[RMDB]
RNA sequence: GGGAACGACUCGAGUAGAGUCGAAAAACGUACCUAUUCGUAGGUACGUGAUAAAAAGCUAGUCAUAUAAAAGGAAGACUAGCAAUAUAGAAUCCUAUAUUAAUAGCACAUGUUUCGACAUGUGCAACCUUCAAUGUAGGUUCGCCUACAUUGAAGGAAAAGAAACAACAACAACAAC
Reactivity to DMS in 0.01 (KOAc 150mM, MgCl2 10mM, bicine 150mM(pH8.5), 24C), signal-to-noise 3, nucleotides 027 to 126: a010c000g000u000a010c000c000u000a010u010u020c180g010u000a010g010g000u000a000c000g000u000g000a060u010a060a050a100a170a080g010c000u010a000g000u000c000a160u000a230u010a030a060a140a080g010g000a190a130g000a010c000u000a000g010c000a020a020u010a080u000a060g000a130a120u000c020c000u000a040u010a060u020u000a070a080u020a190g010c000a000c000a000u000g000u000u000u030c200g020a040c010a000u000g010u000g000c000a030a020
Reactivity to 2A3 in 0.01 (KOAc 150mM, MgCl2 10mM, bicine 150mM(pH8.5), 24C), signal-to-noise 6, nucleotides 027 to 126: a000c000g000u000a000c000c000u010a030u050u080c250g060u050a010g000g000u000a010c000g000u000g000a010u130a020a110a020a020a000g000c010u010a000g010u000c010a040u150a030u110a300a210a070a010g140g050a140a140g010a010c000u000a000g000c000a000a000u030a000u000a010g110a060a070u020c010c020u050a050u020a040u300u190a130a180u090a140g000c000a000c000a000u000g030u010u080u100c240g090a010c000a000u000g000u010g000c000a000a010